The record gives the reactivity of an RNA of 207 nucleotides to DMS and 2A3. 2A3 adducts were read by reverse transcription with SuperScript II with manganese. Values cover nucleotides 27 to 156. Values are in units of 0.01, from 0 to 300, in steps of 10. The RNA was probed in 150 mM KOAc, 10 mM MgCl2 and 150 mM bicine (pH 8.5) at 24 C.
[RMDB]
RNA sequence: GGGAACGACUCGAGUAGAGUCGAAAAACGAGUCGUACGCGACUCGAAUGGUAUUGUCGGCGUAAAAGAACAAGACGUCACCGGACGCGACCGGGCAAAAAAGCGAAACGUCAUCUACGGAUGACGAAAAACGGACCUGGGUUCGCCCAGGUCCGAAGAGUAUCUGAUAGUUCGCUAUCAGAUACUCAAAAGAAACAACAACAACAAC
Reactivity to DMS in 0.01 (KOAc 150mM, MgCl2 10mM, bicine 150mM(pH8.5), 24C), signal-to-noise 1, nucleotides 027 to 156: a170c060g050a050g020u000c010g010u000a130c240g030c000g000a030c000u000c000g020a030a060u000g040g010u000a070u000u010g020u000c020g030g000c030g010u010a060a060a110a150g000a020a170c140a140a150g010a160c020g020u010c010a180c010c060g010g000a120c030g020c000g030a160c000c010g000g000g000c100a000a010a080a040a040a050g010c050g060a070a160a090c000g010u010c010a000u000c010u010a050c300g070g010a040u010g000a000c040g000a000a000a040a050a170c030g020g050a010c030c000u000g050g000g000u000u020c300g000c000c010c000a000g000g030u010c030c000g000a000a000
Reactivity to 2A3 in 0.01 (KOAc 150mM, MgCl2 10mM, bicine 150mM(pH8.5), 24C), signal-to-noise 2, nucleotides 027 to 156: a010c020g000a000g000u000c020g000u040a040c220g000c010g110a000c000u000c000g000a020a070u080g030g060u150a130u140u220g100u100c070g000g020c020g000u060a050a050a090a140g110a130a040c100a090a050g060a030c000g000u010c010a010c010c000g010g000a010c010g010c000g010a000c000c000g000g000g000c020a000a000a000a020a000a000g000c020g050a090a020a020c000g000u000c000a010u010c000u020a020c170g110g000a000u000g000a000c010g030a040a020a000a000a000c010g000g000a000c010c000u010g000g000g030u050u060c060g070c010c010c000a000g000g000u010c000c000g000a000a000